RNA sequence: GGGAACGACUCGAGUAGAGUCGAAAAUGCUUUGAAACCCUCGAUGAAUGUGUCAAUGUGCAAAGAUAAACCAUUGUUCUCUGUUGAUCAGUGACUUAAUGUUUGCUUUGGAGAAUGAUAUUUUCCCAUUUGAGGUGCUGUUCGCAGCACCUCAAAUAAAAGAAACAACAACAACAAC
Reactivity to DMS in 0.01 (KOAc 150mM, MgCl2 10mM, bicine 150mM(pH8.5), 24C), signal-to-noise 1, nucleotides 027 to 126: u010g010c130u070u000u020g000a010a110a110c040c020c000u010c110g010a070u040g020a080a010u080g000u000g000u000c000a010a030u000g050u010g020c000a050a110a000g000a000u000a040a040a030c020c070a040u000u000g000u020u010c000u000c020u000g020u000u000g000a070u030c200a000g030u000g000a110c080u050u010a100a070u010g010u030u000u000g020c000u000u020u000g010g000a050g020a040a050u000g000a060u000a130u000u020u020u010c000c020c050
Reactivity to 2A3 in 0.01 (KOAc 150mM, MgCl2 10mM, bicine 150mM(pH8.5), 24C), signal-to-noise 2, nucleotides 027 to 126: u100g070c010u220u000u030g020a100a000a000c010c020c000u050c030g060a090u130g050a220a000u140g000u000g000u020c000a040a040u250g100u140g010c040a030a040a040g000a110u120a020a020a000c050c000a000u010u000g040u070u000c020u000c000u020g000u080u190g100a050u120c080a070g030u000g000a000c000u020u080a100a040u190g170u030u010u040g000c000u060u000u000g060g000a050g080a050a040u020g000a000u000a110u050u020u010u070c000c000c070

An RNA of 177 nucleotides, treated with DMS and 2A3 and read out base by base. For 2A3, 591 sequencing reads were counted. For DMS, 1,778 sequencing reads were counted. 2A3 adducts were read by reverse transcription with SuperScript II with manganese.